[RMDB]
Structure probing data (DMS and 2A3) for a 207-nucleotide construct.
For 2A3 the reverse transcriptase was SuperScript II with manganese.
The RNA was probed in 150 mM KOAc, 10 mM MgCl2 and 150 mM bicine (pH 8.5) at 24 C.
For DMS, 1,510 sequencing reads were counted.
Reactivities are given for positions 27 through 156.
It was measured as part of the RMDB library RNAMAK.
RNA sequence: GGGAACGACUCGAGUAGAGUCGAAAAGCUCCAUUCGUGGAGCGAGCAUGGGGUCUUCAUGCUCGAGGCUUUUGACGAGCUGAAGCCUCCACGGCUCGAUAAGCUACCCACCGAGCAUCGAAGACGGAGGCACCCGGUGAUAGACGUUCGCGUCUAAAUGUCUCUUCGUUUUCGAACGAAGAGACAUAAAAGAAACAACAACAACAAC
Reactivity to DMS in 0.01 (KOAc 150mM, MgCl2 10mM, bicine 150mM(pH8.5), 24C), signal-to-noise 1, nucleotides 027 to 156: g010c000u020c000c000a150u000u010c250g100u000g010g020a040g010c000g020a030g030c050a130u000g000g020g000g010u000c050u000u030c030a020u040g010c000u000c000g000a140g000g000c000u010u010u020u020g000a260c210g000a130g060c000u010g010a040a050g000c080c000u020c040c000a160c080g010g020c000u000c000g040a130u000a050a050g020c010u000a060c020c050c080a300c040c010g020a060g000c000a030u020c110g000a020a120g000a100c060g000g010a070g010g030c030a080c050c020c030g050g000u000g000a290u010a060g000a020c000g010u000u010c180g080c090g010u000c000u000a010a000
Reactivity to 2A3 in 0.01 (KOAc 150mM, MgCl2 10mM, bicine 150mM(pH8.5), 24C), signal-to-noise 2, nucleotides 027 to 156: g010c000u000c000c010a020u070u160c300g130u040g020g020a000g010c040g010a040g020c110a100u230g050g040g050g030u000c010u000u000c000a000u010g010c000u000c000g030a070g000g000c070u080u100u070u230g170a140c030g010a010g000c000u020g000a010a000g000c000c000u000c000c000a030c020g010g020c000u010c010g050a100u040a180a000g000c000u060a090c070c030c060a030c050c000g000a000g000c000a040u030c240g020a000a000g000a010c010g000g000a010g010g030c020a040c010c000c020g080g000u110g080a130u030a110g000a010c000g020u050u050c230g060c000g120u000c000u020a000a290